[RMDB]
RNA sequence: GGGAACGACUCGAGUAGAGUCGAAAAAAACACAACUGCCAACAACGAAUUGGCACUCGCUGCUUAAUUAAAAGCAGCCGUCUUCCCAAGUUCUGCUCUGAGGCUUGGGCAAGGCGUCAUAAAUCAGAGCUAUCCUAAGGCACAAACCCGAUGCCUUUCAAUUUUUAAACUUCGGUUUAAAAAUUGAAAAAGAAACAACAACAACAAC
Reactivity to 2A3 in 0.01 (KOAc 150mM, MgCl2 10mM, bicine 150mM(pH8.5), 24C), signal-to-noise 2, nucleotides 027 to 156: a000a000a010c200a100c100a200a110c040u090g000c010c000a020a020c030a150a000c090g080a110a110u030u010g010g010c030a040c000u050c000g010c000u020g000c010u100u090a170a160u170u130a110a300a040a000g000c000a000g000c000c010g010u010c000u000u000c000c000c000a000a000g000u000u000c010u050g000c000u000c000u020g010a000g000g000c000u000u000g010g010g000c010a020a000g010g000c010g030u010c000a050u170a100a260a020u020c000a000g000a010g000c000u010a010u080c000c010u040a040a000g010g010c030a030c010a090a120a160c100c100c010g150a120u020g020c000c020u000u040